[RMDB]
An RNA of 177 nucleotides, treated with 2A3 and DMS and read out base by base. DMS adducts were read by reverse transcription with MarathonRT. The reactions ran in a buffer of 150 mM KOAc, 10 mM MgCl2 and 150 mM bicine (pH 8.5), at 24 C.
RNA sequence: GGGAACGACUCGAGUAGAGUCGAAAACGGUGAAUGCCUUGGUGCCAACAGGCGAAGAAGGACGCGGCAAGCUGCGAAAAGCCUCGGGAAGCUGCAAGCAAGCGAUGAUCCGGGGAUAUCCGAAUGGACGUGUAUAAAUAUUCGUAUUUAUACACGUAAAAGAAACAACAACAACAAC
Reactivity to 2A3 in 0.01 (KOAc 150mM, MgCl2 10mM, bicine 150mM(pH8.5), 24C), signal-to-noise 9, nucleotides 027 to 126: c040g040g050u120g080a160a070u130g010c010c010u070u100g090g040u130g080c020c010a070a050c030a120g030g000c030g020a040a010g030a050a040g020g000a000c000g000c000g010g000c020a010a010g000c000u010g000c000g030a010a010a010a010g040c000c000u010c000g000g000g000a020a010g000c000u010g000c010a020a060g010c010a010a010g000c010g090a140u020g000a000u010c000c000g000g000g000g000a000u010a010u000c000c010g040a040a050u130g080g040
Reactivity to DMS in 0.01 (KOAc 150mM, MgCl2 10mM, bicine 150mM(pH8.5), 24C), signal-to-noise 9, nucleotides 027 to 126: c090g010g010u010g010a090a070u020g010c020c020u000u010g010g010u010g010c060c070a120a130c120a070g010g010c020g010a090a080g010a150a180g000g000a030c020g000c010g000g000c010a040a070g000c000u000g000c010g000a020a050a030a040g000c000c000u000c010g000g000g000a030a030g020c000u000g000c020a050a300g010c030a090a020g010c000g010a050u040g000a020u010c010c000g000g000g000g000a010u000a020u000c010c000g010a090a110u020g010g000